[RMDB]
RNA sequence: GGGAACGACUCGAGUAGAGUCGAAAAGUAAAUGCAAUUUUUGACAGGUGGAAUUUUGUAGCUCAUAGAUUUACAUUGUUUAGAGUCAGUCGAAAUGAAGCUGAAAACACAAUCAUAUUCCCUGUACUUACUGGUGUAGGAACCUGAGCACACAGCAUAUAUCCUGCCAUUUCGAUGGCAGGAUAUAAAAAGAAACAACAACAACAAC
Reactivity to DMS in 0.01 (KOAc 150mM, MgCl2 10mM, bicine 150mM(pH8.5), 24C), signal-to-noise 1, nucleotides 027 to 156: g030u010a050a110a080u000g060c020a040a070u000u000u000u000u000g030a140c050a190g040g000u000g010g010a090a060u000u000u010u000g010u000a100g000c070u000c100a100u010a090g010a130u010u010u000a080c050a050u000u000g010u000u000u000a160g010a260g000u000c050a050g010u000c050g010a050a060a120u030g000a160a110g010c030u010g030a060a040a060a110c050a070c050a010a080u000c080a100u000a180u000u000c020c000c000u000g020u000a050c020u010u000a090c070u040g000g000u000g040u010a160g010g010a120a040c010c000u000g010a030g000c030a030c050a050c040a010g010c110a130
Reactivity to 2A3 in 0.01 (KOAc 150mM, MgCl2 10mM, bicine 150mM(pH8.5), 24C), signal-to-noise 2, nucleotides 027 to 156: g020u100a020a130a100u060g030c060a070a090u070u050u050u090u230g040a040c020a060g100g030u040g060g080a050a020u070u050u050u120g040u150a060g010c010u010c020a030u040a040g040a090u050u060u060a040c020a020u080u050g100u200u150u140a050g030a020g010u030c020a010g000u060c010g000a040a140a200u040g000a110a000g000c020u060g070a000a000a080a000c100a010c020a030a050u080c030a010u020a090u070u030c000c010c010u020g000u000a010c000u000u010a070c010u060g000g010u050g030u050a050g050g000a020a020c000c020u000g010a030g040c000a000c010a010c000a070g100c060a050